[RMDB]
Chemical mapping of a 207-nucleotide RNA with DMS and 2A3. The DMS profile rests on 1,751 reads. Values are in units of 0.01, from 0 to 300, in steps of 10. The data come from the RNA Mapping Database (RMDB), library RNAMAK. For DMS the reverse transcriptase was MarathonRT. The 2A3 profile rests on 2,513 reads.

RNA sequence: GGGAACGACUCGAGUAGAGUCGAAAACUACUGUAUUCGUACAGUAGAAAAAGCGUACUACGGUUCGAGAGCAUAAGAACUACGUAUUUCCCAAAUAGGAAAUACGCUUAGCUCCCAGACAAACCGUAUCGCAAAAAGCUGCUGUUCGCAGCAGCAACCUUGAGCGGUGAUUCGUCACCGCUCAAGGAAAAGAAACAACAACAACAAC
Reactivity to DMS in 0.01 (KOAc 150mM, MgCl2 10mM, bicine 150mM(pH8.5), 24C), signal-to-noise 1, nucleotides 027 to 156: c010u000a000c000u020g010u030a020u010u020c270g040u000a000c000a010g030u000a000g000a000a040a080a170a170g000c000g010u020a100c110u000a000c000g020g000u020u020c040g000a090g030a050g180c000a240u010a180a170g040a180a220c050u000a030c020g000u000a000u000u000u000c000c010c000a010a240a300u010a010g000g000a080a040a000u000a030c000g000c000u000u010a110g000c000u010c000c040c000a300g000a080c090a140a020a050c000c000g000u000a030u000c060g000c000a060a090a010a090a110g030c000u010g020c000u000g000u000u010c290g020c020a070g010c010a010g000c040a000a040
Reactivity to 2A3 in 0.01 (KOAc 150mM, MgCl2 10mM, bicine 150mM(pH8.5), 24C), signal-to-noise 4, nucleotides 027 to 156: c000u000a000c000u010g020u000a020u040u130c220g030u110a000c010a000g010u000a010g070a080a010a010a010a000g010c030g040u060a060c020u010a020c040g040g010u050u060c040g020a030g000a000g180c020a220u030a080a000g030a120a080c110u080a050c190g000u000a000u000u000u030c020c000c010a190a220a090u250a070g000g000a010a000a000u000a000c000g000c010u000u000a010g000c000u020c010c060c040a120g030a160c080a060a090a010c000c000g000u010a020u300c020g000c000a010a080a030a040a010g000c010u020g000c010u010g070u130u140c240g000c110a010g000c000a000g050c000a040a060